[RMDB]
RNA sequence: GGGAACGACUCGAGUAGAGUCGAAAAGAUAUGGACGACCUUGUGGGAGCUAUUGCGGUCGGAAACGACCGGAUAGCAUCGAUCACACUGGGUCGUCCUAAGUCAAAGUGACUGUUCGCAGUCACAAUCUCUACUUAAAGUUCGCUUUAAGUAGAGAAAAAGAAACAACAACAACAAC
Reactivity to 2A3 in 0.01 (KOAc 150mM, MgCl2 10mM, bicine 150mM(pH8.5), 24C), signal-to-noise 9, nucleotides 027 to 126: g020a010u050a020u110g000g000a000c000g000a000c010c000u020u020g000u010g020g100g090a270g020c020u020a040u100u110g300c010g000g000u010c010g010g000a030a040a010c010g000a000c000c000g000g010a010u000a000g000c010a090u170c090g050a070u130c040a010c010a010c110u040g020g010g000u000c000g000u000c000c000u000a000a000g000u000c010a050a050a060g000u000g010a000c000u020g060u100u160c300g000c180a000g000u010c000a000c000a010a070
Reactivity to DMS in 0.01 (KOAc 150mM, MgCl2 10mM, bicine 150mM(pH8.5), 24C), signal-to-noise 8, nucleotides 027 to 126: g010a030u000a300u000g000g010a040c000g010a010c000c010u000u000g010u000g000g000g010a120g020c010u000a000u000u000g020c000g030g020u000c000g020g000a060a070a130c000g010a010c000c000g000g000a010u000a010g010c010a100u000c180g010a280u010c100a080c010a030c100u000g010g000g000u000c000g010u000c000c000u000a000a070g000u000c030a100a110a180g010u000g010a020c000u000g000u010u010c230g020c010a020g000u000c000a010c010a130a120

The data come from the RNA Mapping Database (RMDB), library TTRDES. This 177-nucleotide RNA was probed chemically with 2A3 and DMS. Conditions: 150 mM KOAc, 10 mM MgCl2 and 150 mM bicine (pH 8.5), 24 C.